RNA sequence: GGGAACGACUCGAGUAGAGUCGAAAAACGAGUCCGUACGCGGACUCGAAGGGCCCCAGAAGACCAAGGGGCCUAAACCUACCACUCAUUAGAUGCAUGGAAAUCACUAGGUGAUACGUCACCUAGAACACGCUUUUAAGCUUCGGCUUAAAAGCAACCAAGCUCAAAGGUUCGCCUUUGAGCUUGGAAAAGAAACAACAACAACAAC
Reactivity to 2A3 in 0.01 (KOAc 150mM, MgCl2 10mM, bicine 150mM(pH8.5), 24C), signal-to-noise 2, nucleotides 027 to 156: a000c010g000a000g000u000c040c000g000u010a050c290g010c010g050g040a000c000u000c000g010a000a010g000g000g000c000c000c000c000a090g060a300a080g120a130c060c080a080a040g000g020g000g000c000c000u000a010a000a010c010c000u030a010c000c050a030c030u090c030a080u090u130a020g060a090u150g050c110a080u080g190g050a040a070a060u170c080a050c060u010a000g000g000u000g000a010u010a080c160g050u000c010a000c000c000u000a000g000a000a010c050a020c060g000c000u020u020u000u000a000a000g000c000u010u070c170g060g000c000u000u000a000a000a000a000g000c000a000a000